[RMDB]
RNA sequence: GGGAACGACUCGAGUAGAGUCGAAAAUGUUUGCUGCCAGAUAGCACGUGUGUUCAGAUGGGGUUGCUGGUGUCUUCGGUUAAACCCAGGAGAAGCUGGCGGUCCGUGGUAGCGGCCGAAAGACAUCCAUCGUAAAUAUCUUCGGAUAUUUACGAUGAAAAGAAACAACAACAACAAC
Reactivity to DMS in 0.01 (KOAc 150mM, MgCl2 10mM, bicine 150mM(pH8.5), 24C), signal-to-noise 9, nucleotides 027 to 126: u010g010u000u000u000g020c030u000g000c020c020a060g000a140u010a090g010c050a050c100g010u000g020u000g010u010u000c090a090g010a160u020g010g010g010g010u000u000g020c090u000g010g010u000g000u000c010u000u000c010g010g010u000u000a050a100a110c110c010c010a100g010g010a150g010a050a110g010c020u000g000g010c010g010g010u000c020c020g020u010g010g020u000a080g010c080g000g000c000c020g000a030a040a050g000a040c030a040u000c060
Reactivity to 2A3 in 0.01 (KOAc 150mM, MgCl2 10mM, bicine 150mM(pH8.5), 24C), signal-to-noise 7, nucleotides 027 to 126: u090g040u010u040u170g010c020u020g020c010c010a040g050a160u100a040g090c050a040c150g120u150g010u020g030u120u090c060a060g020a170u090g040g000g010g000u040u050g030c040u020g000g020u010g020u000c010u020u010c010g010g010u020u040a080a080a060c000c000c020a020g030g030a070g010a040a030g030c020u030g010g000c020g010g030u010c000c000g050u040g020g060u070a040g040c030g010g000c010c020g060a060a040a010g030a010c000a010u010c010
An RNA of 177 nucleotides, treated with DMS and 2A3 and read out base by base. For 2A3 the reverse transcriptase was SuperScript II with manganese. The data come from the RNA Mapping Database (RMDB), library OK2TST. The RNA was probed in 150 mM KOAc, 10 mM MgCl2 and 150 mM bicine (pH 8.5) at 24 C. DMS adducts were read by reverse transcription with MarathonRT.